[RMDB]
RNA sequence: GGGAACGACUCGAGUAGAGUCGAAAAGUUAGGUGAGGCGGCUACACGAACAUAGGCCACUGACCCCGAACCUCGAGAGACGCCCCGGGUCAGGACAGCUCUUCCCGGCUUAAGGGUUGAGCCCAGGUAUCACCCUGGCUAUUCGUAGCCAGGGUAACAAAGAGGCAUAGUUCGCUAUGCCUCUUUGAAAAGAAACAACAACAACAAC
Reactivity to 2A3 in 0.01 (KOAc 150mM, MgCl2 10mM, bicine 150mM(pH8.5), 24C), signal-to-noise 1, nucleotides 027 to 156: g070u060u070a020g000g000u010g060a070g030g100c060g020g050c000u080a010c090a050c150g150a220a010c090a160u150a060g020g010c000c020a040c050u040g050a060c020c000c000c010g000a020a030c010c010u010c010g070a060g020a010g020a020c030g050c000c000c000c000g000g000g040u040c040a010g030g000a060c050a030g020c000u000c010u020u000c000c020c010g000g020c050u100u200a060a140g000g000g000u000u020g010a020g020c000c010c010a070g010g070u110a030u300c020a010c000c000c000u010g000g010c000u010a010u060u050c220g070u030a000g010c000c000a000g010g010g010u000a000a000
Reactivity to DMS in 0.01 (KOAc 150mM, MgCl2 10mM, bicine 150mM(pH8.5), 24C), signal-to-noise 2, nucleotides 027 to 156: g000u000u000a060g020g020u010g000a220g030g000c010g000g030c000u020a070c090a210c070g010a110a090c060a200u000a070g010g020c000c020a070c060u000g010a170c230c020c000c000g000a050a080c030c010u000c000g010a140g000a250g000a100c050g010c060c000c020c050g050g010g030u000c020a040g040g000a080c100a060g010c010u000c010u010u000c060c130c000g010g000c140u020u000a120a170g000g010g010u000u000g000a170g030c020c010c020a100g010g010u000a090u000c070a070c000c010c000u000g010g020c000u000a040u000u010c190g020u000a000g010c000c000a030g000g000g000u000a000a030
This 207-nucleotide RNA was probed chemically with 2A3 and DMS. The reactions ran in a buffer of 150 mM KOAc, 10 mM MgCl2 and 150 mM bicine (pH 8.5), at 24 C. The 2A3 profile rests on 666 reads. Values cover nucleotides 27 to 156. For DMS the reverse transcriptase was MarathonRT.